This 177-nucleotide RNA was probed chemically with 2A3 and DMS.
The RNA was probed in 150 mM KOAc, 10 mM MgCl2 and 150 mM bicine (pH 8.5) at 24 C.
For 2A3, 627 sequencing reads were counted.
[RMDB]
RNA sequence: GGGAACGACUCGAGUAGAGUCGAAAAAAUACCGCUACUAGCCUGGACCAUGGGCUCUGAACGCCAUCGGCCAGCCCCGGUAAUAGCCGCCGGUACUACCAGACGCCCACAACGGUGGGACACAUCGGGUUACCACAGAUUUCGAUCUGUGGUAACCAAAAGAAACAACAACAACAAC
Reactivity to 2A3 in 0.01 (KOAc 150mM, MgCl2 10mM, bicine 150mM(pH8.5), 24C), signal-to-noise 1, nucleotides 027 to 126: a000a010u120a030c000c000g030c080u080a050c030u060a030g060c000c010u060g070g020a190c080c000a170u110g010g020g000c100u000c100u140g120a110a060c110g020c040c000a060u060c100g010g010c000c020a000g000c040c000c040c010g060g020u090a120a070u100a100g130c060c040g000c020c000g000g010u040a050c000u030a040c020c000a000g040a170c040g110c020c040c050a040c020a260a100c020g210g000u000g040g030g040a000c110a020c000a120u270c140g110
Reactivity to DMS in 0.01 (KOAc 150mM, MgCl2 10mM, bicine 150mM(pH8.5), 24C), signal-to-noise 1, nucleotides 027 to 126: a020a170u010a150c010c010g040c070u000a160c030u020a130g000c110c030u000g000g000a100c090c050a080u000g010g020g040c030u000c050u010g000a120a150c210g000c030c000a090u000c080g010g000c030c000a180g000c060c050c080c070g000g010u000a040a220u020a030g000c050c080g040c040c000g000g010u000a050c030u000a110c050c000a250g030a140c080g000c000c000c000a010c020a180a100c270g050g020u010g020g010g000a140c160a110c100a030u010c270g050